[RMDB]
RNA sequence: GGGAACGACUCGAGUAGAGUCGAAAACAGGUAAUGGGUAUCAAACUUUACCCAGUAUGUGUGGUACUGAGACAUAUACAUGUACAGCCACACACAAACAUGGUUACUUUAAUUGUACCAUGGAGAUUAAAGAUAUGUGGUAUAAACAUACUGAAGACUAGGUUGCACAAUUCGUUGUGCAACCUAGAAAAGAAACAACAACAACAAC
Reactivity to DMS in 0.01 (KOAc 150mM, MgCl2 10mM, bicine 150mM(pH8.5), 24C), signal-to-noise 2, nucleotides 027 to 156: c070a060g000g010u000a090a090u010g020g030g000u000a050u000c030a200a120a120c150u000u000u000a000c000c000c000a120g030u000a010u000g000u000g020u000g020g030u000a070c130u000g000a280g040a140c050a070u010a120u000a300c110a090u010g010u000a020c010a200g000c010c000a080c000a020c000a050c110a080a090a110c040a010u000g000g030u010u000a050c020u020u000u000a230a170u010u000g030u000a020c000c010a010u000g000g000a070g010a200u000u000a070a100a210g010a110u000a030u010g010u000g010g020u000a110u050a120a070a060c010a050u000a050c010u000g010a050a060g010a160
Reactivity to 2A3 in 0.01 (KOAc 150mM, MgCl2 10mM, bicine 150mM(pH8.5), 24C), signal-to-noise 5, nucleotides 027 to 156: c080a030g060g040u100a110a060u050g030g010g030u070a070u130c150a030a140a180c030u080u080u060a020c010c010c000a000g030u020a040u030g010u020g000u000g030g010u070a100c020u020g030a040g050a300c020a040u190a010u090a000c080a100u090g000u000a010c000a000g010c020c010a000c010a000c010a000c010a030a070a000c010a010u000g010g010u140u120a010c010u030u170u300a220a170u200u150g010u010a010c000c000a000u000g020g000a080g000a040u120u190a210a050a000g110a160u040a010u090g050u020g000g050u140a130u140a220a190a000c010a010u070a010c020u060g080a090a010g020a050

Description: Chemical mapping of a 207-nucleotide RNA with DMS and 2A3. For DMS the reverse transcriptase was MarathonRT. 2A3 adducts were read by reverse transcription with SuperScript II with manganese. It was measured as part of the RMDB library OK3TST. Conditions: 150 mM KOAc, 10 mM MgCl2 and 150 mM bicine (pH 8.5), 24 C. Values cover nucleotides 27 to 156. Values are in units of 0.01, from 0 to 300, in steps of 10.